Structure probing data (2A3) for a 207-nucleotide construct. Conditions: 150 mM KOAc, 10 mM MgCl2 and 150 mM bicine (pH 8.5), 24 C. 2A3 adducts were read by reverse transcription with SuperScript II with manganese. The data come from the RNA Mapping Database (RMDB), library VIROID.

RNA sequence: GGGAACGACUCGAGUAGAGUCGAAAAAAGCUUCAACGCCUUUUUUUCCAAUCUUCUUUAGCACCGGGCUAGGGAGUAAGCCCGUGGAACCUUAGUUUUGUUCCCUCGGGACUUACUUGUGGUUCCUGUGGUGCACUCCUGACCCUGCUGCUUUGAACAUGUUCGUGUUGUUCGCAACACGAACAUGAAAAGAAACAACAACAACAAC
Reactivity to 2A3 in 0.01 (KOAc 150mM, MgCl2 10mM, bicine 150mM(pH8.5), 24C), signal-to-noise 1, nucleotides 027 to 156: a000a000g100c110u300u300c190a200a190c220g020c050c060u080u050u050u050u020u070u120c060c000a100a200u090c070u070u010c010u020u160u070a010g000c000a030c040c040g050g000g020c000u090a100g000g080g020a030g010u030a030a070g030c030c000c000g050u010g000g030a000a000c020c000u060u030a030g010u120u020u100u100g010u090u070c000c000c000u050c080g080g000g010a010c000u010u010a010c010u000u050g170u120g080g000u010u000c000c010u080g190u250g030g000u060g010c020a000c000u010c000c000u060g070a090c000c030c000u010g020c030u030g000c000u030u030u050g010a030a010